[RMDB]
The record gives the reactivity of an RNA of 177 nucleotides to 2A3 and DMS.

RNA sequence: GGGAACGACUCGAGUAGAGUCGAAAAGGUCUUUGCUCUCGGCUGUGUCACAGAUAGGGAGAGCAGGGGCGCAGUGCCCCAUGAGCAUCUAAUGCAACUCCCUCAUUUCACAGAUGAGGACACUGACAUUAGUCGAGUUGUUCGCAACUCGACUAAUAAAAGAAACAACAACAACAAC
Reactivity to 2A3 in 0.01 (KOAc 150mM, MgCl2 10mM, bicine 150mM(pH8.5), 24C), signal-to-noise 1, nucleotides 027 to 126: g040g000u010c010u000u050u030g000c050u040c010u000c040g020g010c070u000g000u020g050u030c040a070c040a100g080a100u220a070g080g010g000a010g010a010g040c040a010g010g000g000g000c040g020c080a060g140u170g060c000c000c000c040a070u160g030a030g020c000a020u020c110u300a180a060u060g010c000a010a090c000u060c020c000c000u000c000a030u100u050u040c030a060c000a000g010a050u020g020a000g030g000a010c010a020c030u020g030a000c010
Reactivity to DMS in 0.01 (KOAc 150mM, MgCl2 10mM, bicine 150mM(pH8.5), 24C), signal-to-noise 2, nucleotides 027 to 126: g010g000u000c000u000u010u000g020c000u010c010u000c010g010g020c000u030g000u000g000u030c080a070c140a090g000a110u030a050g010g030g000a020g000a180g000c070a080g010g010g000g040c000g010c270a120g000u020g040c000c010c000c010a040u000g020a170g000c020a060u000c130u000a070a110u000g000c030a090a150c050u000c050c000c000u020c070a060u000u000u000c070a010c080a030g000a070u000g010a010g000g000a050c010a010c010u000g010a070c060
The reactions ran in a buffer of 150 mM KOAc, 10 mM MgCl2 and 150 mM bicine (pH 8.5), at 24 C. Source: RMDB library OK2TST, as collected in RNAgym.